[RMDB]
RNA sequence: GGGAACGACUCGAGUAGAGUCGAAAAGGGAUGCUAAGUUAGUUUACCGGCUAGCUUUCAAGAUUUAAGGUAAAAACUAUUGAGAAUUUGUUUCUGGUGACUCUCUCAAUAGUAUUUCACCAGAUGCGCUCGGAGAAGCUGUUAGGUAGCUUAAAAGGAUCUCAGAGUUGUUCGCAACUCUGAGAUCAAAAGAAACAACAACAACAAC
Reactivity to 2A3 in 0.01 (KOAc 150mM, MgCl2 10mM, bicine 150mM(pH8.5), 24C), signal-to-noise 1, nucleotides 027 to 156: g030g030g030a010u030g020c020u070a060a090g010u040u010a000g040u020u150u020a000c000c000g000g000c010u010a010g000c000u030u100u080c050a010a130g050a200u080u220u270a070a040g000g030u040a120a050a000a060a080c010u020a010u010u000g000a000g010a040a130u300u110u200g010u020u020u000c000u040g030g000u030g020a010c000u010c010u000c000u010c060a000a010u010a010g000u010a040u030u070u060c020a010c000c000a050g000a030u000g020c050g000c030u030c050g150g060a070g020a080a010g050c010u030g030u020u030a020g000g050u030a030g030c020u030u050a000a060a130a160g090